[RMDB]
RNA sequence: GGGAACGACUCGAGUAGAGUCGAAAACUAGAAGUAUCUUACUAUUAUUAUAACCCAAUAUAAUAUGAAUACUCGUGUAUAGCGUAGCUUUCCUUAAUUAGGAGCAGUGAUAUUAUAUCAUGUAGGCAUCGACUAUAAGAUUCGUCUUAUAGUCGAUAAAAGAAACAACAACAACAAC
Reactivity to 2A3 in 0.01 (KOAc 150mM, MgCl2 10mM, bicine 150mM(pH8.5), 24C), signal-to-noise 9, nucleotides 027 to 126: c040u050a040g060a170a020g100u070a090u090c050u140u100a070c030u030a060u240u000a040u080u030a070u080a210a150c010c000c000a010a010u050a000u010a020a020u030a020u090g050a070a030u060a140c010u010c030g020u030g010u050a050u070a060g030c020g040u020a010g000c020u050u090u050c010c000u120u130a230a200u150u180a070g010g020a010g010c050a010g030u010g070a040u010a010u080u060a030u010a020u130c050a020u050g120u150a030g030g040c030
Reactivity to DMS in 0.01 (KOAc 150mM, MgCl2 10mM, bicine 150mM(pH8.5), 24C), signal-to-noise 7, nucleotides 027 to 126: c090u020a090g010a130a130g000u010a020u020c020u020u020a120c050u010a090u010u000a030u000u000a050u010a060a120c030c040c030a080a120u010a010u000a010a020u000a010u010g000a140a080u020a060c030u000c030g020u010g010u010a040u010a050g010c220g010u000a180g000c010u010u030u010c010c000u000u010a090a110u020u030a040g000g010a040g020c100a100g010u010g000a060u050a050u000u000a050u000a010u010c020a020u010g010u020a050g010g010c200